[RMDB]
RNA sequence: GGGAACGACUCGAGUAGAGUCGAAAAGCGUACUACCAUACCAUACACCAACAGCGAGCGUUGUCAGUGGACUCCCAAAUAGGAGUCCACUUGGAUUUACGCUCGACAUGGUGUAUCGGUAUGGUAUCGCAAAGAUCUGUCAGUUCGCUGACAGAUCCGAUCAGGUUUUCUUCGGAAAACCUGAUCGAAAAGAAACAACAACAACAAC
Reactivity to 2A3 in 0.01 (KOAc 150mM, MgCl2 10mM, bicine 150mM(pH8.5), 24C), signal-to-noise 1, nucleotides 027 to 156: g040c030g090u140a180c050u020a020c010c000a020u000a000c000c000a000u000a020c000a000c010c000a050a060c060a210g090c010g010a000g010c040g010u000u000g000u020c000a000g020u050g010g000a000c020u090c030c030c080a080a220a050u300a100g020g000a020g000u000c000c000a000c000u020u060g020g010a000u160u100u170a000c000g000c000u000c000g000a000c010a070u040g000g000u000g000u000a000u000c000g020g010u000a000u000g000g050u000a000u020c000g000c030a120a110a000g040a000u000c000u000g020u010c000a000g000u050u110c170g040c160u020g000a000c000a000g020a000u000c000